[RMDB]
RNA sequence: GGGAACGACUCGAGUAGAGUCGAAAACAACAAAACAAAACAUAGGGGAGUCAGGGUUCGGAACUCCUACCUGAACCUAGGGUAACACUGACUGUGGAGGGGAAAAGAAAGAAAACAAAACAAAACAACCUACGAUAGGUUUCGACCUAUCGUAGGUAAAAGAAACAACAACAACAAC
Reactivity to DMS in 0.01 (KOAc 150mM, MgCl2 10mM, bicine 150mM(pH8.5), 24C), signal-to-noise 2, nucleotides 027 to 126: c140a070a100c230a010a120a050a160c160a020a140a000a120c130a110u040a170g020g000g060g010a060g000u000c050a000g060g000g000u010u000c000g000g000a050a070c100u000c010c010u000a110c200c000u040g000a000a020c000c050u010a110g030g000g000u030a030a030c220a100c120u010g000a040c070u000g020u020g000g010a100g000g020g010g080a100a030a050a040g030a080a000a020g030a060a020a070a080c190a080a070a030a120c080a050a020a110a030c300a010
Reactivity to 2A3 in 0.01 (KOAc 150mM, MgCl2 10mM, bicine 150mM(pH8.5), 24C), signal-to-noise 4, nucleotides 027 to 126: c010a000a000c030a020a190a000a000c070a060a090a020a010c020a170u240a100g000g000g070g010a060g070u060c040a020g000g020g000u000u020c010g030g040a000a040c030u070c090c000u000a040c000c010u030g000a000a000c000c030u040a000g000g000g000u040a080a010c060a020c060u040g140a010c030u020g040u070g080g040a120g070g020g030g020a010a150a030a000g180a000a060a000g140a010a050a020a020c100a020a120a030a010c040a030a080a020a010c070a020